[RMDB]
RNA sequence: GGGAACGACUCGAGUAGAGUCGAAAAUGGGAUGGAUACACCGGACAACCGUGCGUUGUUAUCGAUGACUUCUACGGAUGGAUCAAAUACGAUGAGCUUCUCAAGAUCUGCGACAGAUAUCCUUACACCUAGGCUUUGGAUUCGUCCAAAGCCUAGGAAAAGAAACAACAACAACAAC
Reactivity to DMS in 0.01 (KOAc 150mM, MgCl2 10mM, bicine 150mM(pH8.5), 24C), signal-to-noise 3, nucleotides 027 to 126: u000g020g010g000a060u010g000g000a160u000a150c060a050c030c000g010g010a110c040a110a050c030c070g000u010g000c150g000u010u000g020u010u000a060u010c100g000a050u000g010a150c090u010u030c080u000a060c080g000g010a090u010g010g000a100u020c040a080a120a110u020a110c130g010a080u000g000a090g000c060u010u000c010u000c060a070a140g000a050u010c000u000g030c100g010a080c180a040g000a050u000a060u000c010c040u010u020a130c290a110
Reactivity to 2A3 in 0.01 (KOAc 150mM, MgCl2 10mM, bicine 150mM(pH8.5), 24C), signal-to-noise 1, nucleotides 027 to 126: u140g020g000g000a020u040g010g000a000u060a100c030a020c000c000g030g000a010c000a040a060c050c030g200u070g030c060g000u050u000g030u150u070a160u120c020g000a070u090g010a020c000u070u050c000u070a040c020g070g040a030u050g130g020a060u090c010a000a080a100u280a060c020g000a000u070g000a000g010c030u090u070c060u030c010a000a100g050a060u050c000u020g040c020g060a010c000a020g080a050u050a050u030c000c000u000u110a070c070a010
Chemical mapping of a 177-nucleotide RNA with DMS and 2A3. The data come from the RNA Mapping Database (RMDB), library OK2TRN. The reactions ran in a buffer of 150 mM KOAc, 10 mM MgCl2 and 150 mM bicine (pH 8.5), at 24 C. Values are in units of 0.01, from 0 to 300, in steps of 10.